[RMDB]
RNA sequence: GGGAACGACUCGAGUAGAGUCGAAAAACAUUGUCGGGGUGACCUGGCUUAUACUUGAAGCCUUUGAGCUGGACCCUGGCUUUAUCCAUGAGGCCAGGCUGCGUGUCCAGAUGGCCACACUGGAGGAUGAUGUGGUAGAGGAGGAGCGUUAUACAGAAAAUUAUCCUCACUUCGGUGAGGAUAAUUUAAAAGAAACAACAACAACAAC
Reactivity to DMS in 0.01 (KOAc 150mM, MgCl2 10mM, bicine 150mM(pH8.5), 24C), signal-to-noise 2, nucleotides 027 to 156: a060c070a090u000u000g000u010c050g020g020g030g020u000g010a100c040c020u000g010g010c010u000u010a070u000a080c100u000u010g000a090a050g020c020c000u000u000u000g020a080g050c000u010g030g010a110c060c010c000u010g000g050c010u000u000u000a070u000c140c120a200u010g020a090g000g030c000c010a030g010g030c080u000g010c070g000u000g030u000c040c030a110g000a070u010g010g000c010c010a060c030a180c050u000g010g010a070g020g050a060u010g010a070u010g010u010g000g020u010a080g000a090g000g010a040g020g000a060g010c040g020u020u010a050u000a140c040a140g000a130
Reactivity to 2A3 in 0.01 (KOAc 150mM, MgCl2 10mM, bicine 150mM(pH8.5), 24C), signal-to-noise 2, nucleotides 027 to 156: a000c030a030u060u090g040u030c040g000g010g010g070u050g050a060c030c030u000g000g000c010u150u030a120u060a030c080u080u140g070a070a020g020c020c000u130u090u190g050a050g050c030u020g000g030a030c000c000c020u000g000g000c000u020u020u020a090u070c020c040a090u120g040a020g010g000c000c000a010g040g030c020u060g020c020g070u070g020u000c000c010a030g010a090u060g010g000c000c000a030c000a010c040u050g010g000a020g000g020a060u040g010a070u070g050u020g090g010u040a000g010a010g020g010a020g000g000a010g000c020g020u040u010a100u050a080c090a040g130a010

Structure probing data (DMS and 2A3) for a 207-nucleotide construct. The RNA was probed in 150 mM KOAc, 10 mM MgCl2 and 150 mM bicine (pH 8.5) at 24 C. The DMS profile rests on 4,363 reads.